RNA sequence: GGGAACGACUCGAGUAGAGUCGAAAAAGAAAGAGAGCGUAGCACACACACAGUCUAAGUCUGACACACACCUACGCUACAUGUGUGUGUGAAGUCGAGAUAUCGACAAGUGUGUGUGAUGAAAAAACCUGUAGAGUACCUUCGGGUACUCUACAGGAAAAGAAACAACAACAACAAC
Reactivity to 2A3 in 0.01 (KOAc 150mM, MgCl2 10mM, bicine 150mM(pH8.5), 24C), signal-to-noise 1, nucleotides 027 to 126: a000g060a020a030a000g100a000g020a000g100c100g050u080a000g010c000a000c000a000c000a000c000a000c020a020g000u000c010u020a030a050g010u010c010u010g040a000c000a000c000a000c000a000c040c020u100a020c050g030c080u180a090c140a160u160g050u010g000u000g000u000g000u000g050a110a000g020u080c080g040a000g000a050u030a000u110c050g000a040c060a130a170g000u000g020u010g000u000g010u010g010a040u020g020a020a070a020a020a000a020
Reactivity to DMS in 0.01 (KOAc 150mM, MgCl2 10mM, bicine 150mM(pH8.5), 24C), signal-to-noise 2, nucleotides 027 to 126: a060g010a030a040a050g010a080g000a100g030c020g010u010a120g000c000a030c000a000c000a000c000a000c010a130g000u000c050u000a130a280g010u000c020u010g000a030c010a210c000a000c000a000c020c020u000a040c060g020c190u020a070c280a060u000g000u000g020u000g000u000g030u000g000a070a030g020u000c000g010a010g000a060u000a100u000c140g000a010c000a060a100g030u000g000u000g000u020g020u010g010a020u020g000a000a040a090a090a060a100
An RNA of 177 nucleotides, treated with 2A3 and DMS and read out base by base. The RNA was probed in 150 mM KOAc, 10 mM MgCl2 and 150 mM bicine (pH 8.5) at 24 C. For 2A3, 1,416 sequencing reads were counted. For DMS, 1,126 sequencing reads were counted. Values cover nucleotides 27 to 126. It was measured as part of the RMDB library M2PK90.